This 177-nucleotide RNA was probed chemically with DMS and 2A3. The 2A3 profile rests on 4,339 reads. Conditions: 150 mM KOAc, 10 mM MgCl2 and 150 mM bicine (pH 8.5), 24 C.

RNA sequence: GGGAACGACUCGAGUAGAGUCGAAAAGAUAUGGAACCGCUUACUCCCCACCGCUAUUCAGGCCAACAGCUAGCUCGGAAACGAGCUAGACAUGGCUGUAAGUAGCGAGGUAAGCGGUUCCUAAGUCCAUUAUGUGCUUCUUCGGAAGCACAUAAUGAAAAGAAACAACAACAACAAC
Reactivity to DMS in 0.01 (KOAc 150mM, MgCl2 10mM, bicine 150mM(pH8.5), 24C), signal-to-noise 5, nucleotides 027 to 126: g010a120u010a300u000g010g010a010a000c000c000g030c000u000u000a010c040u000c060c050c000c040a300c110c000g000c000u000a030u000u000c160a270g010g000c000c000a060a090c300a120g010c000u000a000g000c000u000c000g000g000a120a070a280c000g010a000g010c000u010a010g010a010c120a130u010g020g010c000u000g010u000a130a060g030u000a010g000c010g010a140g020g010u000a000a000g020c000g020g010u000u000c000c010u000a000a070g000u000c070
Reactivity to 2A3 in 0.01 (KOAc 150mM, MgCl2 10mM, bicine 150mM(pH8.5), 24C), signal-to-noise 1, nucleotides 027 to 126: g050a020u180a100u270g000g000a010a000c010c010g000c010u010u020a000c020u090c040c030c000c040a050c000c040g000c010u010a000u050u150c100a010g090g000c010c010a040a040c030a170g110c010u000a010g000c010u000c010g030g000a040a160a080c000g000a000g000c000u020a000g010a000c000a040u110g000g000c020u020g010u020a080a000g010u000a000g000c000g010a010g030g000u000a000a010g000c030g010g000u010u030c000c000u000a030a010g030u070c010